Source information: The record gives the reactivity of an RNA of 207 nucleotides to DMS and 2A3. Reactivities are rounded to 0.1 and cut off at 0 and 3. The RNA was probed in 150 mM KOAc, 10 mM MgCl2 and 150 mM bicine (pH 8.5) at 24 C. High 2A3 reactivity points to a flexible backbone, as in loops and unpaired stretches. For DMS the reverse transcriptase was MarathonRT.
[RMDB]
RNA sequence: GGGAACGACUCGAGUAGAGUCGAAAAUGCCUGGCCAAUUAACGCCAUCAAAUCGUCGAACACCCAUCGCGAUCCAUUUGGGAGCAGCCAAUUGAAAUGCCGCAUAGCAAUCUGCAUGAAUUUGAAAGGCGUUUUUCAUAAUGCCCGCAAACGAUUACUCAUUUACUGAUUUCGAUCAGUAAAUGAGAAAAGAAACAACAACAACAAC
Reactivity to DMS in 0.01 (KOAc 150mM, MgCl2 10mM, bicine 150mM(pH8.5), 24C), signal-to-noise 1, nucleotides 027 to 156: u010g020c060c010u020g020g060c030c010a060a110u000u000a050a060c040g020c000c010a280u010c070a040a060a000u020c040g010u000c080g030a070a060c050a260c010c000c030a290u000c090g020c030g000a090u000c100c060a150u010u000u010g030g030g000a180g030c050a070g000c060c010a080a100u010u010g000a110a030a120u000g000c000c040g000c110a090u000a080g000c040a100a100u010c030u020g070c060a080u000g030a070a070u000u000u000g010a090a130a030g040g020c020g020u000u000u000u000u000c020a050u010a020a070u010g010c010c020c000g010c070a040a050a140c020g030a150u010u020a190
Reactivity to 2A3 in 0.01 (KOAc 150mM, MgCl2 10mM, bicine 150mM(pH8.5), 24C), signal-to-noise 2, nucleotides 027 to 156: u080g050c010c010u010g010g040c000c040a050a050u110u050a080a050c040g000c010c000a010u040c030a020a080a000u050c030g170u020c040g030a040a030c030a120c060c020c010a030u030c030g000c020g050a050u040c000c040a100u040u070u100g040g000g030a070g030c010a020g010c000c020a040a070u060u100g060a110a060a000u070g030c040c000g060c070a040u080a070g030c010a020a100u070c050u070g000c020a050u070g070a150a040u120u060u060g110a150a090a020g000g000c000g000u080u010u000u010u010c100a080u110a240a050u110g010c010c010c010g030c050a090a090a000c020g060a020u120u220a070